[RMDB]
RNA sequence: GGGAACGACUCGAGUAGAGUCGAAAAGUCUCUAUCUUCGGAUAGAGACAAAUAUAAGUAGGACUUAGAGCUAGAUCAAUUAAUAUCGUCGACAUCGUAAAAAAAGAGGUAUGUUCGCAUACCUCAACUUCAAUCUAACCUUCGGGUUAGAUUGAAGAAAAGAAACAACAACAACAAC
Reactivity to 2A3 in 0.01 (KOAc 150mM, MgCl2 10mM, bicine 150mM(pH8.5), 24C), signal-to-noise 2, nucleotides 027 to 126: g020u010c000u010c000u000a020u000c000u000u070c270g160g000a010u000a020g000a040g020a000c000a000a010a000u050a000u020a020a010g080u070a070g040g040a000c030u040u070a040g010a020g140c010u020a040g020a110u060c020a010a040u050u130a120a110u080a030u220c070g070u020c030g040a020c050a120u110c050g130u160a010a080a080a000a040a040a040g000a000g020g000u000a000u010g030u040u040c250g030c150a000u000a000c000c020u000c000a020a000
Reactivity to DMS in 0.01 (KOAc 150mM, MgCl2 10mM, bicine 150mM(pH8.5), 24C), signal-to-noise 1, nucleotides 027 to 126: g010u000c000u000c000u000a010u050c010u000u010c180g050g000a000u000a000g000a000g000a010c010a020a040a010u030a090u010a020a010g000u000a110g000g020a300c050u000u000a030g010a140g000c100u010a020g010a070u000c030a100a110u000u000a040a060u000a090u000c030g010u000c060g000a120c130a010u000c060g030u000a000a000a060a100a040a020a220g000a010g000g000u000a010u000g000u010u010c220g030c000a040u000a010c000c000u000c000a010a070
An RNA of 177 nucleotides, treated with 2A3 and DMS and read out base by base. Reactivities are given for positions 27 through 126. High DMS reactivity at an A or C suggests that its Watson-Crick edge is free. Conditions: 150 mM KOAc, 10 mM MgCl2 and 150 mM bicine (pH 8.5), 24 C.